[RMDB]
RNA sequence: GGGAACGACUCGAGUAGAGUCGAAAAGAUAUGGACGAUGAUGAACUACUCUCAGGUGUCGGAAACGACACGUAGGAGCAUCCGCUCGUCCUAAGUCAAAACGUCACUGCGUUCGCGCAGUGACGAAUCUGAUAUCAUGCUUCGGCAUGAUAUCAGAAAAAGAAACAACAACAACAAC
Reactivity to 2A3 in 0.01 (KOAc 150mM, MgCl2 10mM, bicine 150mM(pH8.5), 24C), signal-to-noise 1, nucleotides 027 to 126: g060a030u110a030u140g010g010a010c020g000a030u300g000a010u000g010a090a050c030u230a080c000u300c040u070c070a090g000g220u000g010u000c010g040g000a060a100a070c000g010a000c000a000c010g050u050a020g000g050a010g040c010a010u000c010c020g010c020u010c020g000u000c000c000u020a170a000g040u020c050a020a020a120a180c000g000u020c000a010c000u000g000c000g090u120u100c300g020c000g000c100a010g000u000g000a010c000g010a000a010
Reactivity to DMS in 0.01 (KOAc 150mM, MgCl2 10mM, bicine 150mM(pH8.5), 24C), signal-to-noise 3, nucleotides 027 to 126: g020a070u000a300u000g000g000a020c000g000a000u010g000a090u010g010a070a030c080u030a300c000u000c020u000c070a270g010g010u000g030u000c000g000g000a160a080a280c000g010a010c000a020c000g000u010a300g010g000a000g010c000a040u000c050c010g030c010u000c010g020u000c000c000u000a020a130g020u000c050a030a060a090a120c010g030u000c000a000c000u030g000c000g040u000u000c300g020c010g040c000a000g000u020g000a000c000g020a030a030
Structure probing data (2A3 and DMS) for a 177-nucleotide construct.
Values are in units of 0.01, from 0 to 300, in steps of 10.
Conditions: 150 mM KOAc, 10 mM MgCl2 and 150 mM bicine (pH 8.5), 24 C.
For 2A3 the reverse transcriptase was SuperScript II with manganese.
For DMS the reverse transcriptase was MarathonRT.
For DMS, 1,779 sequencing reads were counted.